[RMDB]
RNA sequence: GGGAACGACUCGAGUAGAGUCGAAAAGAAACUAGGAAAAGGCGCAUACAGCCGAGUCAGCAUUGACGAAAUGCGAAAGUAUGCAAACUAGGAAAGGCGUACUGAGCCGAACAGUACAAAUAAGAAAGGGUUAGUAAUUCUUCGGAAUUACUAACCCAAAAGAAACAACAACAACAAC
Reactivity to 2A3 in 0.01 (KOAc 150mM, MgCl2 10mM, bicine 150mM(pH8.5), 24C), signal-to-noise 2, nucleotides 027 to 126: g040a000a110a000c060u030a020g040g170a000a060a010a000g140g020c110g000c000a010u000a010c000a040g060c060c000g030a020g020u030c070a000g000c050a080u040u080g090a180c240g000a040a000a060u080g000c040g010a000a200a000g000u000a000u000g000c000a040a030a040c000u040a000g010g010a020a260a000g030g050c050g010u000a000c020u040g030a030g070c000c040g040a000a000c010a000g000u020a000c000a040a160a000u250a060a040g120a090a030a020
Reactivity to DMS in 0.01 (KOAc 150mM, MgCl2 10mM, bicine 150mM(pH8.5), 24C), signal-to-noise 2, nucleotides 027 to 126: g000a120a170a120c000u030a010g000g030a080a160a090a100g020g000c050g020c000a000u010a010c060a070g010c050c090g030a130g000u000c120a110g030c020a030u010u000g000a040c230g000a010a020a080u070g040c020g020a040a050a070g000u000a000u000g000c010a020a150a060c000u010a030g010g000a080a060a060g000g000c150g000u000a000c030u000g000a090g000c050c100g030a010a190c000a010g050u000a000c000a130a070a100u020a100a060g140a080a160a130